[RMDB]
Overview
This 207-nucleotide RNA was probed chemically with 2A3 and DMS. Source: RMDB library OK3TST, as collected in RNAgym. The 2A3 profile rests on 3,412 reads. Conditions: 150 mM KOAc, 10 mM MgCl2 and 150 mM bicine (pH 8.5), 24 C. Reactivities are given for positions 27 through 156.
RNA sequence: GGGAACGACUCGAGUAGAGUCGAAAAACGCAUUGAUCAUAUGGUUAUACGACGCGUACGUUACAACCGCAUAACUACAACUAGUCAGCGCAUACUACAGUUACACGCAGUGUGUCGAUCAGCUGCGCGCGGUGUCAGUACACUGCGACAUCGAUUAUGCGUAGUUUUAAUUCGUUAAAACUACGCAAAAAGAAACAACAACAACAAC
Reactivity to 2A3 in 0.01 (KOAc 150mM, MgCl2 10mM, bicine 150mM(pH8.5), 24C), signal-to-noise 5, nucleotides 027 to 156: a000c040g020c080a120u110u100g040a060u100c050a070u090a110u200g050g000u070u050a050u020a070c110g040a040c030g060c040g060u090a060c060g050u100u050a070c070a100a050c040c000g010c050a050u050a140a020c060u130a100c060a130a020c030u030a030g060u060c030a030g030c010g010c090a060u040a130c020u060a030c020a110g020u090u040a050c090a010c040g000c000a010g000u010g000u010g040u060c020g040a040u050c050a060g010c040u050g030c030g000c040g000c000g100g010u020g030u050c020a010g000u010a010c010a010c020u010g020c000g020a010c020a040u060c010g010a080u250u200a010
Reactivity to DMS in 0.01 (KOAc 150mM, MgCl2 10mM, bicine 150mM(pH8.5), 24C), signal-to-noise 3, nucleotides 027 to 156: a050c060g000c070a100u010u010g020a050u010c060a140u010a110u000g020g030u000u000a030u010a050c010g000a080c070g000c130g040u010a040c130g050u010u000a110c070a070a140c020c010g030c020a060u000a020a010c020u000a040c040a060a100c130u010a070g010u000c020a080g020c020g020c020a090u000a050c040u000a020c040a100g010u010u000a110c080a110c000g030c000a030g020u000g040u000g030u000c070g000a080u000c050a140g010c030u010g010c080g040c020g020c000g010g040u000g000u010c030a100g010u000a090c060a060c010u010g000c010g020a080c080a100u010c020g010a080u010u000a090
For 2A3 the reverse transcriptase was SuperScript II with manganese. DMS adducts were read by reverse transcription with MarathonRT.